[RMDB]
Chemical mapping of a 177-nucleotide RNA with 2A3.
Values cover nucleotides 27 to 126.
The data come from the RNA Mapping Database (RMDB), library OK1LIB.
For 2A3, 330 sequencing reads were counted.
2A3 adducts were read by reverse transcription with SuperScript II with manganese.
Conditions: 150 mM KOAc, 10 mM MgCl2 and 150 mM bicine (pH 8.5), 24 C.
RNA sequence: GGGAACGACUCGAGUAGAGUCGAAAACAGUCAGUGGUGGCGAACCAUUGUUACAAAUGCCAUUCUUAGAAAAAUUAUUUGCGGAAUUAAAAGAAAAUGGUGUGCACACUUGCUUAGACACAUCGGCGCUCCAUUCCACGUUCGCGUGGAAUGGAGCAAAAGAAACAACAACAACAAC
Reactivity to 2A3 in 0.01 (KOAc 150mM, MgCl2 10mM, bicine 150mM(pH8.5), 24C), signal-to-noise 1, nucleotides 027 to 126: c000a020g090u100c000a020g000u020g220g220u000g120g120c110g070a000a000c000c000a030u120u000g260u110u060a090c140a050a140a000u000g030c060c000a000u000u110c140u200u230a000g300a000a000a000a000a000u230u200a250u160u000u260g100c070g000g030a000a030u110u290a040a000a000a160g300a070a070a070a130u000g000g000u000g040u080g000c000a000c000a000c150u000u210g000c040u110u160a120g000a000c120a000c000a060u020c000g090g000c030